[RMDB]
RNA sequence: GGGAACGACUCGAGUAGAGUCGAAAACAGGGUGACAGCCCCGUAUCACGGACCAGUACGACGUGCGUCAGCUCCAGAGUAGCGGGGGUUGGAAAUCCCUCGUGAAUGUGGCAGGCAUCGACUGCCAGCAGCCGUACAGCUUCGGCUGUACGGCUGCAAAAGAAACAACAACAACAAC
Reactivity to 2A3 in 0.01 (KOAc 150mM, MgCl2 10mM, bicine 150mM(pH8.5), 24C), signal-to-noise 1, nucleotides 027 to 126: c000a060g150g000g000u030g090a000c080a070g040c000c000c000c000g020u180a160u070c120a040c040g190g000a050c020c000a240g000u240a010c040g020a060c010g120u240g190c050g000u040c030a060g070c000u030c060c000a040g000a000g130u010a000g180c010g020g000g050g000g000u020u060g000g200a100a000a000u150c000c000c000u000c050g000u000g030a200a100u020g040u000g020g000c040a010g000g000c070a000u060c220g110a110c000u000g000c000c000a000

This 177-nucleotide RNA was probed chemically with 2A3.
Source: RMDB library RFM100, as collected in RNAgym.
For 2A3, 386 sequencing reads were counted.
Values are in units of 0.01, from 0 to 300, in steps of 10.